[RMDB]
RNA sequence: GGGAACGACUCGAGUAGAGUCGAAAACUUAAUCGAAUCAUAGUAGAUUAGCUUAAUCCAGGCACCAGGUGCCAGGACGAGACAUCACUCGGAAGCUGUUGCUCCGAAGCAUUCCGGUUUAGUGGUGCAGUUACAUCGGGGAUAGUCAGAAGUGGCCCUAGGUAAUACGGUUCGCCGUAUUACCUAGAAAAGAAACAACAACAACAAC
Reactivity to 2A3 in 0.01 (KOAc 150mM, MgCl2 10mM, bicine 150mM(pH8.5), 24C), signal-to-noise 3, nucleotides 027 to 156: c020u050u050a020a010u040c020g040a030a010u120c080a200u160a150g030u010a020g020a030u040u030a010g020c000u090u170a030a020u070c020c010a070g010g000c010a010c070c120a130g060g060u010g000c010c020a020g010g030a010c040g030a020g020a040c000a020u020c010a010c030u060c010g010g010a020a020g020c030u020g050u210u200g020c010u000c030c030g010a020a010g010c040a200u010u010c030c010g050g040u130u150u170a030g000u020g030g010u020g020c020a030g020u050u130a050c040a130u080c050g000g010g000g000a020u010a030g080u080c040a010g010a120a060g100u060g030g000c000c000
Reactivity to DMS in 0.01 (KOAc 150mM, MgCl2 10mM, bicine 150mM(pH8.5), 24C), signal-to-noise 2, nucleotides 027 to 156: c030u000u000a030a050u010c010g010a110a160u010c140a260u000a120g030u000a160g010a060u000u000a010g020c080u010u010a100a100u000c020c020a090g040g010c000a030c000c150a160g030g020u000g000c000c060a070g020g030a060c010g000a120g030a130c010a050u000c010a030c000u010c000g010g000a050a170g030c030u010g020u000u000g010c020u000c060c070g010a100a080g010c020a140u000u000c010c010g010g020u000u020u030a060g020u000g050g050u010g000c030a080g020u000u000a040c040a080u000c040g020g020g010g020a060u000a080g010u000c040a120g010a060a090g040u010g010g020c010c260
This 207-nucleotide RNA was probed chemically with 2A3 and DMS.
For DMS the reverse transcriptase was MarathonRT.
For 2A3 the reverse transcriptase was SuperScript II with manganese.
The RNA was probed in 150 mM KOAc, 10 mM MgCl2 and 150 mM bicine (pH 8.5) at 24 C.